[RMDB]
Structure probing data (DMS) for a 177-nucleotide construct.
High DMS reactivity at an A or C suggests that its Watson-Crick edge is free.
For DMS the reverse transcriptase was MarathonRT.
The data come from the RNA Mapping Database (RMDB), library TTRDES.
The RNA was probed in 150 mM KOAc, 10 mM MgCl2 and 150 mM bicine (pH 8.5) at 24 C.

RNA sequence: GGGAACGACUCGAGUAGAGUCGAAAAGAUAUGGACUGUUGUGAGCUAGUCCGGUGGUCGGAAACGACCACUAGGACUUGGACCUCACACCAGUCCUAAGUCAAAGAGGAAUGUUCGCAUUCCUCAACGUUGAACUCAACUUCGGUUGAGUUCAACGAAAAGAAACAACAACAACAAC
Reactivity to DMS in 0.01 (KOAc 150mM, MgCl2 10mM, bicine 150mM(pH8.5), 24C), signal-to-noise 2, nucleotides 027 to 126: g000a040u010a300u000g000g020a000c000u000g020u010u000g030u000g000a000g010c130u030a040g040u000c000c000g010g000u000g000g000u000c000g060g010a090a090a280c010g000a000c000c000a000c000u000a050g070g000a020c020u000u010g000g000a040c300c000u010c010a010c010a020c040c000a020g020u000c010c000u000a030a080g000u000c020a140a130a220g000a020g020g000a020a000u010g000u000u000c260g000c010a000u000u000c000c000u000c000a000a040